[RMDB]
RNA sequence: GGGAACGACUCGAGUAGAGUCGAAAAGAUAUGGAAUUAAACUAUAGAAGGACUUUGAUCUCGGAAACGAGGGAGUCCCUAUAGCACUAAUUCCUAAGUCAAAGUGAGCAGGUUCGCCUGCUCACAACAUUUGUCUUAACUUCGGUUAAGACAAAUGAAAAGAAACAACAACAACAAC
Reactivity to 2A3 in 0.01 (KOAc 150mM, MgCl2 10mM, bicine 150mM(pH8.5), 24C), signal-to-noise 6, nucleotides 027 to 126: g040a030u110a050u150g000g000a020a010u020u020a090a080a050c010u010a000u030a060g180a300a210g100g000a000c010u210u300u210g120a140u140c010u000c010g030g060a110a080a050c010g000a010g000g010g010a010g000u000c010c000c000u010a010u010a000g020c030a020c070u020a010a000u010u010c000c000u030a220a020g050u040c050a070a010a130g010u010g010a000g010c000a000g020g030u100u200c240g140c060c000u010g000c000u000c000a000c000a000a000
Reactivity to DMS in 0.01 (KOAc 150mM, MgCl2 10mM, bicine 150mM(pH8.5), 24C), signal-to-noise 6, nucleotides 027 to 126: g000a060u010a300u000g010g010a010a000u010u000a030a100a250c000u000a000u000a000g010a130a100g010g010a020c000u000u000u020g000a080u010c000u000c010g000g010a100a060a170c000g000a020g010g000g000a000g010u000c000c000c000u000a000u000a010g000c060a140c230u000a000a000u000u000c000c000u010a060a140g000u000c020a070a100a150g010u000g010a020g010c010a000g000g010u000u010c280g020c000c000u000g000c000u000c000a000c000a050a120
Chemical mapping of a 177-nucleotide RNA with 2A3 and DMS. For 2A3 the reverse transcriptase was SuperScript II with manganese. For DMS the reverse transcriptase was MarathonRT. The reactions ran in a buffer of 150 mM KOAc, 10 mM MgCl2 and 150 mM bicine (pH 8.5), at 24 C. Values cover nucleotides 27 to 126. For 2A3, 10,107 sequencing reads were counted.